[RMDB]
RNA sequence: GGGAACGACUCGAGUAGAGUCGAAAAGGGGUCGUGGGAGGACGAGAAGGAGCAACAGCAUACCUGAAGCCUCCACGGGUAUGACAUGCUCCCAUCCGUCCAUCGAUCACGACGGAGGCACCCAAAACGCCAUGUACUCUUCGGAGUACAUGGCGAACAUCUGAAAUUGCUUCGGCAAUUUCAGAUGAAAAGAAACAACAACAACAAC
Reactivity to 2A3 in 0.01 (KOAc 150mM, MgCl2 10mM, bicine 150mM(pH8.5), 24C), signal-to-noise 3, nucleotides 027 to 156: g030g020g080g020u010c000g020u000g000g010g010a030g000g010a000c020g020a050g030a220a080g000g020a010g010c050a060a150c060a150g000c000a010u000a000c000c000u030g050a130a020g010c000c000u010c010c000a000c000g000g000g000u010a000u000g050a150c130a260u300g000c000u010c050c000c010a130u060c040c030g000u000c010c000a040u210c000g000a000u010c000a000c010g010a000c010g000g000a000g000g040c000a030c000c000c000a020a060a010a030c010g000c000c000a010u000g000u010a010c000u000c010u080u110c300g070g000a000g000u000a000c000a000u000g000g020c000g010a000a010

This 207-nucleotide RNA was probed chemically with 2A3.
2A3 is a SHAPE reagent: it acylates the 2'-hydroxyl of flexible nucleotides of all four kinds.
Reactivities are given for positions 27 through 156.
For 2A3, 3,049 sequencing reads were counted.
The RNA was probed in 150 mM KOAc, 10 mM MgCl2 and 150 mM bicine (pH 8.5) at 24 C.
Source: RMDB library RNAMAK, as collected in RNAgym.